[RMDB]
RNA sequence: GGGAACGACUCGAGUAGAGUCGAAAACAACUGUGGUGGUGAGUGCCUGUGAUCCCAGCUGCUCGGGAGGAUCACUUAAGCCCGGGAGAUGGAGGCUGCUAUGAGGUGUGAUUGUACCAUUGCACUCGACAUCUUCCGCAUUCGUGCGGAAGAUGUCAAAAGAAACAACAACAACAAC
Reactivity to 2A3 in 0.01 (KOAc 150mM, MgCl2 10mM, bicine 150mM(pH8.5), 24C), signal-to-noise 1, nucleotides 027 to 126: c010a010a000c020u090g040u070g050g020u050g000g080u060g080a110g000u040g040c050c060u070g020u040g050a020u000c010c000c000a040g090c040u160g010c010u000c000g030g020g000a130g050g040a050u070c020a020c110u040u180a050a050g000c030c010c040g070g040g010a100g000a020u050g020g030a020g030g030c040u010g030c020u070a020u130g080a100g010g090u000g000u030g070a160u110u200g030u090a020c020c020a000u010u100g020c030a070c010u080c090
Reactivity to DMS in 0.01 (KOAc 150mM, MgCl2 10mM, bicine 150mM(pH8.5), 24C), signal-to-noise 1, nucleotides 027 to 126: c070a110a110c100u010g020u000g030g010u000g010g020u000g010a080g010u010g000c020c110u010g020u000g000a040u000c050c010c020a130g000c010u000g010c050u010c050g050g010g020a140g000g010a070u010c070a060c020u000u010a110a130g020c030c010c040g010g010g020a050g020a090u010g000g010a130g000g000c130u000g010c040u010a080u010g010a090g010g010u010g000u000g010a120u020u000g000u000a100c110c060a060u000u010g000c030a040c030u000c040